[RMDB]
This 207-nucleotide RNA was probed chemically with DMS and 2A3.
DMS adducts were read by reverse transcription with MarathonRT.

RNA sequence: GGGAACGACUCGAGUAGAGUCGAAAAUAGUAAAUUACUUCCAAAUCAGUGUCAGCAGUUAAAAUGGAGACCCUCUCUUUCCUGAGGAAAAAACAACACAGCAGGACGUGGACUGAGGCAAAACUGACUUGUUUACUACGACAACAUCAUGGCCAUAAUUACUGACGACUUUCGAGUCGUCAGUAAUAAAAGAAACAACAACAACAAC
Reactivity to DMS in 0.01 (KOAc 150mM, MgCl2 10mM, bicine 150mM(pH8.5), 24C), signal-to-noise 1, nucleotides 027 to 156: u000a070g010u000a000a020a060u000u000a170c050u000u030c070c040a120a210a120u000c050a060g030u000g000u000c040a100g010c030a070g040u020u000a050a050a090a130u000g020g030a140g010a090c050c010c000u000c000u000c040u000u020u010c040c010u000g030a160g000g040a000a050a100a060a050a020c040a010a070c080a100c010a000g000c040a100g020g000a110c160g050u000g020g000a080c040u000g000a070g040g000c030a020a050a070a090c010u000g010a070c010u000u000g020u000u000u010a070c040u000a030c070g010a030c070a040a070c040a070u010c040a020u010g020g000c010c020a010u000a090
Reactivity to 2A3 in 0.01 (KOAc 150mM, MgCl2 10mM, bicine 150mM(pH8.5), 24C), signal-to-noise 2, nucleotides 027 to 156: u060a020g050u030a050a080a070u120u070a050c050u030u020c030c020a070a080a080u080c110a060g020u000g090u120c040a030g000c020a020g010u020u120a030a070a100a130u080g020g020a030g000a000c030c030c000u000c030u000c000u120u060u050c010c020u050g010a060g040g000a020a040a130a070a000a010c100a010a020c030a020c050a060g050c020a000g000g050a000c030g030u040g040g010a010c030u010g000a020g080g000c020a020a000a070a120c020u020g100a030c000u000u040g010u060u070u030a060c050u010a030c050g090a010c000a070a000c000a050u080c000a050u030g020g000c030c000a050u050a170
Description:
2A3 adducts were read by reverse transcription with SuperScript II with manganese. Reactivities are given for positions 27 through 156. The data come from the RNA Mapping Database (RMDB), library OK3TST. The 2A3 profile rests on 1,041 reads.